RNA sequence: GGGAACGACUCGAGUAGAGUCGAAAAAGUUCUAGUCCUCACCUAAGAUCAGACUGACAGGGCCCUCAAAGUAAGAGCACUUGGUUGGGCUUUGUGGUGGGGAUUAGUGUCUCAUUUUUAGUCCCAAAUUAAAAACGAGAUUUUGGGCUGUACAUCACUAGCCUAUGAUAUUCGUAUCAUAGGCUAGAAAAGAAACAACAACAACAAC
Reactivity to DMS in 0.01 (KOAc 150mM, MgCl2 10mM, bicine 150mM(pH8.5), 24C), signal-to-noise 2, nucleotides 027 to 156: a070g020u000u000c000u010a050g020u000c020c010u000c010a040c030c000u000a070a140g010a180u000c090a130g010a100c060u020g010a170c020a070g040g010g000c010c000c030u000c040a040a060a100g040u010a070a180g010a220g020c150a030c010u010u000g020g070u030u000g030g030g030c000u000u000u000g030u000g000g020u000g000g010g040g020a010u000u000a020g020u010g010u020c000u010c010a030u000u010u000u000u000a030g000u010c030c030c080a080a030a120u000u000a010a040a010a020a010c020g020a050g000a180u000u000u000u000g020g020g010c120u000g010u010a030c080a180u010c050a260
Reactivity to 2A3 in 0.01 (KOAc 150mM, MgCl2 10mM, bicine 150mM(pH8.5), 24C), signal-to-noise 2, nucleotides 027 to 156: a010g090u140u030c000u000a000g000u020c000c000u020c000a000c040c010u090a130a050g030a190u170c070a040g150a300c090u190g000a000c000a000g000g020g000c000c020c000u030c050a060a050a020g030u050a140a020g030a030g240c050a000c050u000u010g050g060u160u030g050g030g000c010u010u000u010g060u010g000g000u010g000g020g000g000a000u000u000a000g000u000g020u000c030u010c030a080u100u120u070u020u240a040g040u090c010c010c010a010a020a000u020u040a030a030a080a010a000c150g030a050g010a160u020u020u030u060g000g000g000c010u030g020u140a140c060a140u110c050a050
Conditions: 150 mM KOAc, 10 mM MgCl2 and 150 mM bicine (pH 8.5), 24 C. This 207-nucleotide RNA was probed chemically with DMS and 2A3. For DMS, 4,158 sequencing reads were counted. Reactivities are given for positions 27 through 156. For DMS the reverse transcriptase was MarathonRT.